[RMDB]
RNA sequence: GGGAACGACUCGAGUAGAGUCGAAAAUUGCGCCUCCGAUUCGCCGUCGGCAUUUCCCCAGCAGCCAUGACCUACCAGGCUGCGGUGCGGCUCGCCGCACAGGUCAUCUCUCAUCGGGCGCGUCCUGGAUAGGGCUAUACUUUCGAGUAUAGCCCAAGUAUUACAAACUAUUCGUAGUUUGUAAUACAAAAGAAACAACAACAACAAC
Reactivity to 2A3 in 0.01 (KOAc 150mM, MgCl2 10mM, bicine 150mM(pH8.5), 24C), signal-to-noise 3, nucleotides 027 to 156: u090u090g010c010g000c000c020u060c040c020g040a060u110u060c050g020c040c020g040u030c030g050g020c040a030u080u060u030c010c000c000c000a010g000c000a000g000c010c020a170u110g020a050c010c010u130a250c120c060a020g010g000c000u010g000c000g000g010u030g000c010g000g010c060u090c130g120c010c010g010c000a000c020a020g010g030u020c010a100u050c070u020c020u020c040a140u090c060g000g010g000c030g000c040g050u050c000c010u050g080g000a120u120a200g020g000g000c000u010a000u000a000c000u090u070u130c220g040a000g010u010a000u000a000g000c040c000c000a000a000
Reactivity to DMS in 0.01 (KOAc 150mM, MgCl2 10mM, bicine 150mM(pH8.5), 24C), signal-to-noise 2, nucleotides 027 to 156: u000u010g040c010g000c030c010u000c030c030g000a090u000u000c100g000c020c070g000u000c050g080g000c070a150u000u000u000c000c010c010c040a120g010c040a050g000c030c020a150u010g000a110c030c040u000a180c120c100a110g020g010c000u000g000c000g020g030u010g030c020g000g030c150u010c200g040c010c040g000c020a030c030a040g000g030u000c020a100u010c020u000c040u010c090a110u000c060g010g020g020c030g030c020g000u000c030c030u010g010g000a260u000a090g030g040g020c010u010a010u010a000c010u000u000u000c210g010a070g020u000a010u000a010g000c010c000c000a000a020